[RMDB]
RNA sequence: GGGAACGACUCGAGUAGAGUCGAAAAUUCAUGGAGACCCAUCCCACACUGGAUGCCCUACACUGUGACAUCGGCAAUGCCACUGAGUUUAACAAAAUAUUCCAAGAUGAGAUUAGGGAGGUGUCUCAAUAUGCCUCCCAUUCGUGGGAGGCAUAUUAAAAGAAACAACAACAACAAC
Reactivity to DMS in 0.01 (KOAc 150mM, MgCl2 10mM, bicine 150mM(pH8.5), 24C), signal-to-noise 4, nucleotides 027 to 126: u000u030c070a050u060g000g020a030g020a050c030c020c040a140u020c010c000c020a130c090a060c080u010g000g010a030u000g000c020c020c040u000a050c060a060c040u020g030u000g010a050c050a070u030c120g000g010c110a080a110u000g000c030c020a030c030u000g000a090g030u010u000u020a120a080c240a030a020a060a070u040a050u010u000c000c010a040a080g000a140u010g000a130g020a050u020u050a090g010g000g000a060g000g010u010g010u000c010u000c030
Reactivity to 2A3 in 0.01 (KOAc 150mM, MgCl2 10mM, bicine 150mM(pH8.5), 24C), signal-to-noise 3, nucleotides 027 to 126: u150u090c080a060u130g050g010a020g010a050c000c010c000a100u020c000c000c010a060c010a020c010u070g010g010a010u030g060c000c000c010u030a030c020a030c080u040g030u030g020a020c010a090u050c000g060g050c080a010a080u140g010c030c010a020c040u000g030a020g140u020u090u060a120a020c060a020a030a020a020u140a080u060u000c010c010a020a080g050a180u130g030a070g040a150u090u190a100g020g020g000a010g000g000u100g020u000c000u000c040
The record gives the reactivity of an RNA of 177 nucleotides to DMS and 2A3.
Reactivities are given for positions 27 through 126.
2A3 adducts were read by reverse transcription with SuperScript II with manganese.
The RNA was probed in 150 mM KOAc, 10 mM MgCl2 and 150 mM bicine (pH 8.5) at 24 C.